[RMDB]
RNA sequence: GGGAACGACUCGAGUAGAGUCGAAAAUGGACUUUUUACAGAUCCUACUUAUCCGGUUUUAACGCUGUUUUAUUGGCGCAAAGGUUUACGGAUAAACAACUAAUAAUUAAACCUUUUGUGUGCGAAAAUUGGACGUUUAGGUUCGCCUAAACGUCAACUCAAUGACUUCGUUCGCGAAGUCAUUGAGAAAAGAAACAACAACAACAAC
Reactivity to DMS in 0.01 (KOAc 150mM, MgCl2 10mM, bicine 150mM(pH8.5), 24C), signal-to-noise 1, nucleotides 027 to 156: u000g000g020a150c050u000u010u010u020u000a300c150a050g030a050u000c000c010u000a110c110u000u010a020u010c000c010g010g000u010u010u020u010a100a110c040g020c000u000g020u000u000u000u000a270u020u020g020g030c010g050c040a040a030a030g080g000u020u000u020a140c010g030g000a080u000a020a020a130c040a040a140c060u040a080a100u010a170a150u010u000a000a020a020c000c000u000u000u000u000g020u000g000u000g040c000g010a100a060a080a190u000u000g010g010a020c000g000u000u000u000a010g040g020u000u000c300g030c000c000u000a020a030a020c000g010u000c000a000a040
Reactivity to 2A3 in 0.01 (KOAc 150mM, MgCl2 10mM, bicine 150mM(pH8.5), 24C), signal-to-noise 2, nucleotides 027 to 156: u070g000g000a020c030u080u030u040u100u200a110c220a070g000a120u030c000c000u000a040c010u010u020a010u000c000c000g000g040u050u030u010u060a060a050c070g010c020u050g140u150u170u070u150a130u180u200g020g000c000g020c020a030a020a000g010g000u010u000u000a000c000g000g010a010u020a020a110a010c020a020a000c050u150a050a160u100a060a010u080u110a010a020a000c000c000u030u030u090u040g100u000g000u020g010c100g040a060a040a120a170u110u100g080g010a010c000g010u000u000u000a010g040g030u020u020c160g040c030c000u000a000a000a000c000g000u000c000a000a000